This 207-nucleotide RNA was probed chemically with 2A3. For 2A3 the reverse transcriptase was SuperScript II with manganese.
RNA sequence: GGGAACGACUCGAGUAGAGUCGAAAAGGCCGAUUCGUCGGCCCGAACGGGGUCGUCCACGAAACGUGAUGACCAUGAACUACCUCUGAAGCCUCCACGGAGGCAUGCAAGCGUUGAGUGGACGACGGAGGCACCCUAACUGGCGAUUCGUCGCCAAGCGUCAAUAUUCCUUCGGGAAUAUUGACGCAAAAGAAACAACAACAACAAC
Reactivity to 2A3 in 0.01 (KOAc 150mM, MgCl2 10mM, bicine 150mM(pH8.5), 24C), signal-to-noise 2, nucleotides 027 to 156: g020g020c030c000g000a020u020u110c230g070u000c000g080g000c000c000c020g070a140a040c130g000g000g000g040u060c040g000u000c000c010a000c010g000a020a000a000c040g010u020g040a300u010g010a070c000c000a000u000g010a040a070c160u260a080c290c000u020c000u000g030a030a020g020c000c000u030c030c040a000c020g010g000a020g000g060c000a000u010g020c010a010a220g010c010g000u010u000g020a050g010u050g000g020a000c010g040a000c000g030g000a000g010g000c010a020c010c020c000u040a120a120c120u070g000g020c000g010a010u050u070c200g060u020c010g170c010c000a020a000